Record summary
The data come from the RNA Mapping Database (RMDB), library M2RFOK. An RNA of 207 nucleotides, treated with DMS and 2A3 and read out base by base. The RNA was probed in 150 mM KOAc, 10 mM MgCl2 and 150 mM bicine (pH 8.5) at 24 C. The 2A3 profile rests on 2,019 reads. Values cover nucleotides 27 to 156. The DMS profile rests on 1,632 reads. 2A3 adducts were read by reverse transcription with SuperScript II with manganese.
RNA sequence: GGGAACGACUCGAGUAGAGUCGAAAAACUGCAUCUACGGAUGCAGAACUACGUUCAUCCAAUUUAUGUGGACGCAUGAAAUGAGAAUAGGGAACGGGAUUCUCAUACGCAGGCUACGGCCUGCGAAAAAACUCCUUAUGCUUCGGCAUAAGGAGAACCAGAUGUAAAGGUUCGCCUUUACAUCUGGAAAAGAAACAACAACAACAAC
Reactivity to DMS in 0.01 (KOAc 150mM, MgCl2 10mM, bicine 150mM(pH8.5), 24C), signal-to-noise 1, nucleotides 027 to 156: a080c010u020g000c000a000u010c000u000a120c300g050g000a040u000g020c010a070g000a000a090c010u000a000c000g050u000u000c000a030u000c180c130a180a150u000u000u010a010u020g040u000g020g000a000c000g070c000a030u000g010a070a060a110u000g000a050g000a060a080u010a120g000g000g060a070a060c080g000g000g000a300u000u000c000u000c050a060u000a060c030g000c000a040g020g010c010u030a110c300g020g060c000c000u000g050c000g010a000a020a030a040a040a040c010u000c000c000u010u010a040u000g010c020u000u000c300g030g020c000a020u000a000a000g000g000a000g000a000a020
Reactivity to 2A3 in 0.01 (KOAc 150mM, MgCl2 10mM, bicine 150mM(pH8.5), 24C), signal-to-noise 3, nucleotides 027 to 156: a000c000u000g000c000a000u000c000u020a050c190g090g000a000u000g020c000a000g000a010a000c030u090a050c010g010u010u040c020a080u050c020c080a170a190u070u140u070a120u280g070u030g060g060a030c060g020c070a040u120g080a070a080a070u080g010a100g010a040a040u040a070g010g060g020a070a000c050g000g040g020a020u030u020c010u020c010a020u040a060c020g000c010a000g000g000c000u040a060c220g090g000c020c000u000g000c000g020a000a000a000a000a000a010c010u000c000c000u000u000a000u000g000c010u010u040c170g070g000c000a000u000a000a000g010g010a000g000a000a010